The record gives the reactivity of an RNA of 177 nucleotides to DMS and 2A3. The 2A3 profile rests on 6,369 reads. The RNA was probed in 150 mM KOAc, 10 mM MgCl2 and 150 mM bicine (pH 8.5) at 24 C. Reactivities are rounded to 0.1 and cut off at 0 and 3. DMS adducts were read by reverse transcription with MarathonRT.
[RMDB]
RNA sequence: GGGAACGACUCGAGUAGAGUCGAAAACCCCUUCAUGUGGGGAGGAGCACAAUGUUUUUGCGACAGUGAGAACAGCCAGAUGAGUGAGGCGUACGUCGAAUUGUCAGUAGAUUGCGCGACUGACCACGCCCAUACAUGAUUUCGAUCAUGUAUGGGCAAAAGAAACAACAACAACAAC
Reactivity to DMS in 0.01 (KOAc 150mM, MgCl2 10mM, bicine 150mM(pH8.5), 24C), signal-to-noise 4, nucleotides 027 to 126: c070c010c010c250u020u000c120a060u000g020u000g020g020g010g030a070g000g000a180g030c050a040c030a010a040u000g020u000u010u000u000u010g010c100g010a040c090a040g010u010g000a220g010a020a040c030a220g010c010c020a070g000a150u010g000a190g030u000g000a120g010g010c010g000u010a070c260g020u000c050g010a140a040u010u000g020u010c000a100g030u020a060g000a030u000u000g020c010g020c000g000a120c020u010g010a060c020c100a040c080
Reactivity to 2A3 in 0.01 (KOAc 150mM, MgCl2 10mM, bicine 150mM(pH8.5), 24C), signal-to-noise 5, nucleotides 027 to 126: c020c000c000c000u090u190c130a240u210g010u040g040g000g010g040a020g000g020a020g010c020a010c020a060a050u060g140u100u140u100u140u210g060c030g000a010c010a020g010u020g030a050g010a050a000c010a000g000c020c010a070g030a240u200g070a080g250u130g100a120g010g010c010g020u150a060c090g030u030c000g020a040a040u020u030g020u000c010a010g000u000a020g010a030u010u050g000c010g000c000g030a040c000u020g060a010c010c000a010c030